[RMDB]
RNA sequence: GGGAACGACUCGAGUAGAGUCGAAAAGAAAUUACGUUUCCUUUACACUUCUCAAACCGGGAUCAAGAGAAGCAACGCAUCCCUCAUAUCCACGAUGGAGGGUGUCGUGGAGUAUACUGUACCAAAAAGAGCGAACACGGCUUCGGCCGUGUUCGAAGGAUCGUACAAAGUUCGCUUUGUACGAUCCAAAAGAAACAACAACAACAAC
Reactivity to 2A3 in 0.01 (KOAc 150mM, MgCl2 10mM, bicine 150mM(pH8.5), 24C), signal-to-noise 2, nucleotides 027 to 156: g050a000a060a050u240u130a050c020g010u020u010u010c000c000u040u040u090a020c030a000c000u050u040c030u030c040a140a170a150c080c070g180g060g000a110u110c060a190a060g000a000g000a010a010g000c000a000a030c020g020c000a070u060c020c010c000u050c030a030u080a050u130c000c000a000c020g000a000u020g010g070a000g040g000g010u010g000u020c000g010u000g000g030a010g010u020a020u070a080c090u120g120u160a110c000c110a070a100a060a050a030g150a030g100c010g010a000a000c000a000c000g000g030c030u040u040c200g080g000c000c010g000u010g000u000u000c000g000a000a000
About this RNA: An RNA of 207 nucleotides, treated with 2A3 and read out base by base. It was measured as part of the RMDB library M2RFPK. Values cover nucleotides 27 to 156.